Source: RMDB library OK2TRN, as collected in RNAgym. Structure probing data (2A3 and DMS) for a 177-nucleotide construct. For 2A3, 17,240 sequencing reads were counted. For DMS, 33,798 sequencing reads were counted.
RNA sequence: GGGAACGACUCGAGUAGAGUCGAAAACUGUCAGUGAGAGUGAGAGUCUCAGUGAGUGAGUGACACUGUCUCAGUCUCUCAGUCUGAGUCAGACAGUGACAGUGUGUCACAGUCAGUGAGUGUGACAAGACACCAUUGUAUUCGUACAAUGGUGUCUAAAAGAAACAACAACAACAAC
Reactivity to 2A3 in 0.01 (KOAc 150mM, MgCl2 10mM, bicine 150mM(pH8.5), 24C), signal-to-noise 7, nucleotides 027 to 126: c010u020g030u050c010a060g070u020g090a040g010a020g070u110g050a130g010a030g090u020c010u000c050a040g070u010g030a050g030u130g040a080g050u120g030a010c000a000c010u010g010u010c010u000c010a030g040u000c010u000c000u000c000a020g110u040c110u140g030a050g100u090c040a000g000a020c010a010g010u000g010a000c000a020g020u040g030u020g000u080c000a000c000a020g090u050c010a030g100u040g230a070g060u060g010u030g020a010c020a040
Reactivity to DMS in 0.01 (KOAc 150mM, MgCl2 10mM, bicine 150mM(pH8.5), 24C), signal-to-noise 9, nucleotides 027 to 126: c020u000g010u000c030a060g020u000g000a050g000a060g010u000g010a130g000a160g010u000c060u010c030a030g010u000g000a070g020u010g010a130g010u000g010a090c010a020c000u000g010u000c010u000c030a050g010u000c000u000c010u000c020a100g010u000c170u010g000a080g000u010c140a050g000a030c000a080g010u000g000a010c010a020g010u000g000u000g010u000c010a010c010a080g000u000c040a110g000u010g010a070g000u000g010u000g000a040c070a110